Structure probing data (DMS and 2A3) for a 207-nucleotide construct. The RNA was probed in 150 mM KOAc, 10 mM MgCl2 and 150 mM bicine (pH 8.5) at 24 C. DMS adducts were read by reverse transcription with MarathonRT.
RNA sequence: GGGAACGACUCGAGUAGAGUCGAAAAACAUAUUACGAUAUGAUUCAGAUGGUGUCUUACUGGUUCGUACCAAGGGACAUAAUGGUUUCUUGUUUGCAACCAAAGAACAAGUGGCGAGCCUGAAUAAAAAACUGACUGCCGUUCGCGGCAGUCAGAACGACAAAGAUAUGUUCGCAUAUCUUUGUCGAAAAGAAACAACAACAACAAC
Reactivity to DMS in 0.01 (KOAc 150mM, MgCl2 10mM, bicine 150mM(pH8.5), 24C), signal-to-noise 2, nucleotides 027 to 156: a080c020a090u000a090u000u020a110c080g000a110u000a090u000g020a090u000u000c030a080g030a120u000g000g020u000g010u000c020u000u000a120c140u020g010g000u020u000c090g020u000a100c240c030a040a050g010g020g000a020c000a170u000a100a140u010g000g000u000u000u000c020u000u010g000u020u000u040g000c030a070a060c040c020a060a030a110g000a000a080c040a010a050g020u000g010g020c000g020a140g010c030c000u010g010a040a090u050a000a050a030a110a130a140c000u010g000a020c000u000g030c000c000g050u000u000c300g040c060g000g030c070a000g000u020c000a000g020a040a090
Reactivity to 2A3 in 0.01 (KOAc 150mM, MgCl2 10mM, bicine 150mM(pH8.5), 24C), signal-to-noise 6, nucleotides 027 to 156: a000c050a030u150a040u090u180a050c080g060a050u040a030u140g080a050u050u100c030a040g040a110u100g060g060u080g030u070c030u040u110a170c050u050g010g010u030u060c070g020u050a050c020c020a020a010g020g010g010a000c000a020u180a090a130u160g120g000u010u000u020c000u000u030g040u070u100u090g030c020a030a030c020c010a130a050a010g030a040a020c050a100a050g030u030g070g030c030g020a020g030c000c010u030g040a050a020u100a080a070a030a010a010a020c000u000g000a000c000u000g000c010c000g030u040u050c260g000c010g080g000c020a000g000u000c000a000g000a010a000